[RMDB]
RNA sequence: GGGAACGACUCGAGUAGAGUCGAAAAUAGCUGCAGAGUUUCCAUGGAUCAUUUAGAUAUUCUGAUAGAUUUGAGGCUAUUGCGCUCCGUGAUAGCGGGGGCCUCAAAUCGAACUGGCGCCUGGAAAACUUUCCUACACAUUCGUGUGUAGGAAAGUAAAAGAAACAACAACAACAAC
Reactivity to DMS in 0.01 (KOAc 150mM, MgCl2 10mM, bicine 150mM(pH8.5), 24C), signal-to-noise 2, nucleotides 027 to 126: u000a060g000c050u000g030c020a080g000a100g010u000u000u000c010c030a070u000g000g010a100u010c100a100u010u000u000a080g000a080u010a060u010u000c040u000g000a100u010a150g000a010u010u000u000g000a010g000g010c030u000a110u010u000g000c060g000c010u000c070c080g020u000g020a120u030a070g010c000g020g010g010g000g020c000c000u000c000a000a000a000u000c000g000a070a050c270u000g000g020c060g010c030c160u000g000g010a040a080a070
Reactivity to 2A3 in 0.01 (KOAc 150mM, MgCl2 10mM, bicine 150mM(pH8.5), 24C), signal-to-noise 1, nucleotides 027 to 126: u060a030g080c020u070g010c020a010g030a060g160u000u090u010c040c040a050u110g070g000a000u060c010a080u140u160u120a070g030a040u090a050u150u000c040u030g050a080u020a160g000a010u000u020u000g010a010g000g010c030u090a270u190u170g060c050g030c000u030c040c050g130u130g050a210u140a080g040c000g000g070g000g000g000c000c000u000c000a000a000a030u010c020g030a030a000c030u040g010g000c010g000c010c000u000g080g000a000a150a000